[RMDB]
RNA sequence: GGGAACGACUCGAGUAGAGUCGAAAAAAAAAGAUAUGGACAACCUCCCCACCGAUCUAAGGCGAAGAACUCGUAUCGGAAACGAUACGAGGGAGCCUUAGAUCGAGGGUUGUCCUAAGUCAAAAAAGUAUUUAUGGUGGUUCGCCACCAUAAAUACAAAAGAAACAACAACAACAAC
Reactivity to DMS in 0.01 (KOAc 150mM, MgCl2 10mM, bicine 150mM(pH8.5), 24C), signal-to-noise 1, nucleotides 027 to 126: a130a010a080a080a120g000a050u030a110u010g000g000a010c000a000a000c000c000u020c220c080c010c070a300c120c000g000a000u000c000u000a000a020g010g010c020g000a090a140g000a080a060c000u000c000g010u000a000u000c010g010g000a090a020a050c000g000a040u000a000c000g000a000g000g040g000a090g000c000c000u000u000a000g000a000u000c000g000a050g000g000g030u000u000g000u010c000c000u000a020a060g020u020c090a000a010a100a130a150a120
An RNA of 177 nucleotides, treated with DMS and read out base by base. DMS adducts were read by reverse transcription with MarathonRT. Conditions: 150 mM KOAc, 10 mM MgCl2 and 150 mM bicine (pH 8.5), 24 C. It was measured as part of the RMDB library TTRDES.